Chemical mapping of a 177-nucleotide RNA with 2A3 and DMS. The RNA was probed in 150 mM KOAc, 10 mM MgCl2 and 150 mM bicine (pH 8.5) at 24 C. For DMS, 16,189 sequencing reads were counted. For 2A3, 37,719 sequencing reads were counted.
[RMDB]
RNA sequence: GGGAACGACUCGAGUAGAGUCGAAAAUCAUGCUAUCACCAGCUAACUGUGUCACCUACAGUUAGUGGUGAGCGAGAGUUCACCAAGUGUCAUUGUAGGUGACGAUGACGCUUUGGUGAUAGCAUGCCUAGUCGAUACAAUUCGUUGUAUCGACUAGAAAAGAAACAACAACAACAAC
Reactivity to 2A3 in 0.01 (KOAc 150mM, MgCl2 10mM, bicine 150mM(pH8.5), 24C), signal-to-noise 2, nucleotides 027 to 126: u100c000a000u000g000c000u000a000u000c000a000c000c000a000g000c000u010a040a040c030u040g010u010g070u130c030a040c030c000u030a000c000a010g000u010u020a020g010u010g000g000u000g000a000g000c000g000a070g000a000g000u000u000c000a000c000c000a010a010g090u040g050u040c010a010u000u020g020u030a040g000g110u060g000a010c000g000a010u010g000a000c020g000c020u040u020u120g000g000u000g000a000u000a000g000c000a000u000g000c000
Reactivity to DMS in 0.01 (KOAc 150mM, MgCl2 10mM, bicine 150mM(pH8.5), 24C), signal-to-noise 7, nucleotides 027 to 126: u020c010a010u010g010c000u000a010u000c000a000c000c000a020g010c000u000a080a120c090u000g010u000g000u000c180a080c200c010u000a070c000a010g010u000u000a030g010u000g010g010u000g000a000g000c000g000a240g000a210g010u000u000c000a000c010c000a000a030g000u000g010u000c060a010u000u000g010u000a110g010g010u010g010a090c010g010a010u000g010a140c120g000c000u000u000u000g020g010u000g000a000u000a000g000c000a000u000g000c250